The record gives the reactivity of an RNA of 177 nucleotides to 2A3 and DMS. It was measured as part of the RMDB library OK2TRN. Values are in units of 0.01, from 0 to 300, in steps of 10. The reactions ran in a buffer of 150 mM KOAc, 10 mM MgCl2 and 150 mM bicine (pH 8.5), at 24 C. For DMS, 6,215 sequencing reads were counted.
RNA sequence: GGGAACGACUCGAGUAGAGUCGAAAAGAACUCCAACAUGGAUAGGUUAAAGGUAAGGGGAUAAGAUAGUUCUUACCUAUUUACAGCUGGCACCAUUGUUGUAAACUAGCUUAACACUGUUUGUGCCCUGAUGAAUUUACUUCGGUAAAUUCAUCAGAAAAGAAACAACAACAACAAC
Reactivity to 2A3 in 0.01 (KOAc 150mM, MgCl2 10mM, bicine 150mM(pH8.5), 24C), signal-to-noise 4, nucleotides 027 to 126: g030a040a030c030u020c060c010a030a010c020a080u090g030g010a090u050a090g060g020u070u080a110a090a030g010g010u010a020a010g110g000g010g040a070u080a180a100g110a120u190a090g120u040u010c010u010u010a000c000c000u010a070u010u080u020a020c010a010g040c020u030g040g000c090a050c050c020a040u050u170g020u000u020g030u030a030a030a020c060u040a030g060c010u050u050a050a020c080a030c110u030g020u070u040u030g010u050g010c000c000
Reactivity to DMS in 0.01 (KOAc 150mM, MgCl2 10mM, bicine 150mM(pH8.5), 24C), signal-to-noise 6, nucleotides 027 to 126: g000a120a100c100u010c060c030a100a140c080a050u000g000g000a060u000a060g010g010u000u000a030a130a060g020g020u010a010a020g010g010g000g000a140u010a080a120g020a130u010a110g010u010u000c010u000u000a010c010c000u000a060u010u000u000a050c090a050g000c020u000g010g010c110a070c080c120a130u000u000g010u000u010g010u000a070a040a050c110u010a050g010c110u000u000a020a050c090a070c030u010g010u000u000u000g020u000g000c080c060